Structure probing data (DMS and 2A3) for a 177-nucleotide construct.
For DMS the reverse transcriptase was MarathonRT.
2A3 adducts were read by reverse transcription with SuperScript II with manganese.
Values are in units of 0.01, from 0 to 300, in steps of 10.
It was measured as part of the RMDB library OK1LIB.
[RMDB]
RNA sequence: GGGAACGACUCGAGUAGAGUCGAAAAAUCUACCUGUUAUCUAGCUUUGGGCUAGGCCAUUCCAGUUCCAGACGCAGGCUGAACGUCGUGAAGCGGAAGGGGCGGGCCCGCAGGCGUCCGUGUGGUCCUAUAACCCACCGUUCGCGGUGGGUUAUAGAAAAGAAACAACAACAACAAC
Reactivity to DMS in 0.01 (KOAc 150mM, MgCl2 10mM, bicine 150mM(pH8.5), 24C), signal-to-noise 3, nucleotides 027 to 126: a060u010c100u030a130c040c020u000g040u040u020a110u040c020u020a060g010c030u000u010u030g010g020g020c010u000a040g000g010c090c040a150u000u020c040c060a120g000u000u000c010c030a060g010a040c020g010c080a090g000g030c060u010g020a120a140c030g030u000c010g000u010g000a090a080g010c020g000g000a050a050g010g000g000g000c040g000g000g000c060c040c010g010c070a040g000g000c080g030u000c010c030g030u000g030u020g030g000u000c060
Reactivity to 2A3 in 0.01 (KOAc 150mM, MgCl2 10mM, bicine 150mM(pH8.5), 24C), signal-to-noise 3, nucleotides 027 to 126: a000u090c060u070a120c020c020u030g080u130u070a120u060c050u050a040g050c000u080u130u170g050g030g040c000u000a030g050g060c000c020a060u050u040c040c020a020g050u070u010c010c000a020g000a020c000g060c060a060g080g000c040u060g040a070a030c000g020u000c030g040u030g040a060a000g050c040g010g020a050a010g050g030g010g020c020g020g040g030c000c000c000g000c000a010g010g000c020g000u000c000c000g040u090g030u060g030g050u010c010